[RMDB]
RNA sequence: GGGAACGACUCGAGUAGAGUCGAAAACGCAUCGCGAGCGGGGCCGGCCUCACUGCCGUUAAGGCUGACCGCGAUGGUCAGGUCGGCGUUGACCCCGGCGAUCGGCGCCAUCGGCAGUGGAUCCAGGACGGUUAAGAUGAUUCGUCAUCUUAACCGUAAAAGAAACAACAACAACAAC
Reactivity to DMS in 0.01 (KOAc 150mM, MgCl2 10mM, bicine 150mM(pH8.5), 24C), signal-to-noise 7, nucleotides 027 to 126: c080g010c080a050u000c050g010c040g000a090g020c050g020g000g010g030c030c010g010g000c040c030u000c070a030c060u010g010c000c000g010u000u020a090a270g020g000c010u000g010a010c010c010g030c230g010a100u010g010g010u000c010a050g000g010u000c030g010g010c070g010u000u000g000a110c060c040c030c090g010g000c050g000a070u000c030g000g020c040g010c010c020a110u000c020g000g000c010a030g020u000g010g000a100u010c050c060a130g020g010
Reactivity to 2A3 in 0.01 (KOAc 150mM, MgCl2 10mM, bicine 150mM(pH8.5), 24C), signal-to-noise 4, nucleotides 027 to 126: c020g010c010a040u060c020g030c060g100a050g060c050g000g000g040g000c000c020g000g010c010c000u040c020a040c020u020g000c010c010g050u040u140a150a050g090g000c020u010g020a010c020c020g060c110g170a180u300g020g000u000c010a000g040g080u080c050g050g020c010g000u010u020g020a030c030c000c010c000g070g010c060g050a080u030c010g050g010c020g000c020c010a040u040c000g030g000c000a010g010u020g040g000a020u040c040c010a040g030g060